[RMDB]
RNA sequence: GGGAACGACUCGAGUAGAGUCGAAAAGCAGUAUCUCGUUAGGCGAGGCUCCUAUACAAACACAGGUUGCUGAUCUGACGACGUCGAGAGACGCCCAAGAAUAGGACAGGAUAUAUCGAACCAAGGUGAACCUGUCCAGGGUUCGCCCUGGACAGAACAAACUAAGCUUGUUCGCAAGCUUAGUUUGAAAAGAAACAACAACAACAAC
Reactivity to 2A3 in 0.01 (KOAc 150mM, MgCl2 10mM, bicine 150mM(pH8.5), 24C), signal-to-noise 5, nucleotides 027 to 156: g030c040a020g030u110a100u090c040u020c030g000u010u100a080g010g080c060g030a070g020g030c020u040c010c010u100a090u060a200c110a060a160a020c080a020c030a080g070g010u130u090g010c010u010g020a110u000c010u030g010a030c020g010a010c010g040u030c040g020a010g000a010g000a100c010g010c020c000c020a030a030g080a040a050u120a060g000g030a000c040a040g010g050a020u050a000u020a040u150c100g030a040a050c030c020a050a040g090g010u070g040a060a040c010c000u000g010u000c000c000a000g010g000g000u020u070c150g100c010c000c010u000g000g000a000c000a000g000a000a020
Reactivity to DMS in 0.01 (KOAc 150mM, MgCl2 10mM, bicine 150mM(pH8.5), 24C), signal-to-noise 3, nucleotides 027 to 156: g030c080a140g020u000a120u000c020u000c020g040u010u010a110g070g010c020g010a090g000g010c050u000c020c000u000a120u000a190c080a120a080a110c070a060c040a080g020g030u000u000g010c020u000g020a150u000c020u000g020a150c010g000a010c020g020u000c010g010a300g010a300g010a030c000g000c010c020c030a160a070g000a100a120u010a070g050g010a100c020a130g020g010a080u000a100u000a040u000c060g010a070a140c020c010a030a120g010g010u000g040a050a090c080c000u000g020u000c050c020a030g000g030g030u000u000c280g030c000c010c000u000g000g000a020c020a030g010a020a170

Source information: This 207-nucleotide RNA was probed chemically with 2A3 and DMS. For DMS, 5,626 sequencing reads were counted. The RNA was probed in 150 mM KOAc, 10 mM MgCl2 and 150 mM bicine (pH 8.5) at 24 C.